[RMDB]
RNA sequence: GGGAACGACUCGAGUAGAGUCGAAAACGCGUCAUGUUCGCAUGACGCGCAUUACCGAGAAAGGAGCUCGGUAUAAAACUCCAACCCUUGGAAACAACGGAAAACCGAUAGUAUUCGUACUAUCGAAGAUAGGUAGUUGGUUCGCCAACUACCUAUCAAAAGAAACAACAACAACAAC
Reactivity to 2A3 in 0.01 (KOAc 150mM, MgCl2 10mM, bicine 150mM(pH8.5), 24C), signal-to-noise 3, nucleotides 027 to 126: c010g010c010g000u010c000a000u000g030u060u080c170g010c130a000u000g010a000c000g000c000g000c000a010u010u070a020c000c020g000a000g020a030a300a060g180g020a070g070c000u000c000g000g000u000a010u030a000a010a010a010c030u000c010c000a070a070c010c000c010u010u010g030g010a080a080a030c020a030a030c060g100g000a060a060a030a050c060c010g010a000u000a000g000u000a020u010u080c180g010u010a010c000u000a000u000c010g000a010a010
Reactivity to DMS in 0.01 (KOAc 150mM, MgCl2 10mM, bicine 150mM(pH8.5), 24C), signal-to-noise 3, nucleotides 027 to 126: c000g010c000g000u010c000a010u000g000u000u010c150g020c020a010u010g010a010c000g000c000g010c060a030u000u000a060c010c000g010a010g010a060a110a160g010g000a140g010c000u000c010g010g020u010a010u000a020a040a080a100c070u000c020c020a070a160c050c020c020u010u000g010g000a130a070a060c010a020a050c110g020g000a100a060a110a080c220c000g000a000u000a000g010u000a010u000u010c140g010u000a020c000u000a000u000c000g010a070a060

Notes:
An RNA of 177 nucleotides, treated with 2A3 and DMS and read out base by base. Conditions: 150 mM KOAc, 10 mM MgCl2 and 150 mM bicine (pH 8.5), 24 C. For DMS, 2,634 sequencing reads were counted. 2A3 adducts were read by reverse transcription with SuperScript II with manganese. The 2A3 profile rests on 6,412 reads. DMS adducts were read by reverse transcription with MarathonRT. Values are in units of 0.01, from 0 to 300, in steps of 10. It was measured as part of the RMDB library M2PK50. Reactivities are given for positions 27 through 126.